An RNA of 207 nucleotides, treated with 2A3 and read out base by base. The data come from the RNA Mapping Database (RMDB), library M2RFPK. Reactivities are given for positions 27 through 156. The RNA was probed in 150 mM KOAc, 10 mM MgCl2 and 150 mM bicine (pH 8.5) at 24 C.

RNA sequence: GGGAACGACUCGAGUAGAGUCGAAAAACAUAUUACGAUAUGAUUCAGAUGGUGUCUUACUGGUUCGUACCAAGGGACACAAUGGUUUCUUGUUUCCAACCAAAGAACAAGUGGCGAGCCUGAAUAAAAAACUGACUGCCGUUCGCGGCAGUCAGAACCUAGGCAUCACGUUCGCGUGAUGCCUAGGAAAAGAAACAACAACAACAAC
Reactivity to 2A3 in 0.01 (KOAc 150mM, MgCl2 10mM, bicine 150mM(pH8.5), 24C), signal-to-noise 1, nucleotides 027 to 156: a000c000a030u130a030u060u060a080c110g080a090u030a020u060g140a150u030u220c080a020g050a180u210g030g060u000g010u010c010u010u070a110c040u050g040g040u070u230c190g080u260a040c000c000a050a020g110g000g000a000c000a000c000a010a010u040g000g000u000u000u000c000u000u000g030u050u000u010c000c020a040a120c010c020a050a090a050g040a000a000c000a000a000g000u020g050g030c000g040a010g030c000c020u070g050a000a090u160a190a060a030a000a000a000c000u000g000a000c000u000g000c000c000g040u080u050c180g000c020g060g000c000a000g010u000c000a000g010a000a000